About this RNA: Chemical mapping of a 177-nucleotide RNA with 2A3 and DMS. 2A3 adducts were read by reverse transcription with SuperScript II with manganese.
[RMDB]
RNA sequence: GGGAACGACUCGAGUAGAGUCGAAAAGCGGCAGUGCACAGAUACAACGCCUCUCAGCGUUAUGGGAGCGGAACUCAAGAGAACGAAAUUAGACAUCACACGCACUGAAAACACGACUCUUGAAGAACACUAUUAGGGCCUUCGGGCCCUAAUAGUGAAAAGAAACAACAACAACAAC
Reactivity to 2A3 in 0.01 (KOAc 150mM, MgCl2 10mM, bicine 150mM(pH8.5), 24C), signal-to-noise 3, nucleotides 027 to 126: g090c040g000g000c030a000g010u000g040c000a040c000a110g080a070u200a230c050a070a040c110g030c050c000u040c000u000c000a080g020c140g200u150u240a120u090g000g000g020a000g050c020g010g000a030a030c000u000c030a070a000g050a040g030a100a080c080g070a080a100a070u170u140a090g090a040c040a080u090c010a030c000a030c030g000c030a030c020u020g090a000a120a040a000c080a000c000g040a020c010u000c000u030u000g000a020a020g010a070a040
Reactivity to DMS in 0.01 (KOAc 150mM, MgCl2 10mM, bicine 150mM(pH8.5), 24C), signal-to-noise 2, nucleotides 027 to 126: g000c050g050g000c000a030g000u000g070c000a140c050a130g050a060u070a020c200a120a070c000g000c170c000u000c030u000c000a020g000c300g000u000u020a040u010g000g000g000a050g000c000g000g060a260a090c070u000c020a090a020g000a000g010a150a060c050g000a160a030a070u020u040a110g030a000c210a020u010c070a100c160a160c140g020c040a010c090u000g000a090a030a040a220c220a030c030g000a280c010u000c030u000u000g020a030a080g000a060a140

For 2A3, 1,255 sequencing reads were counted.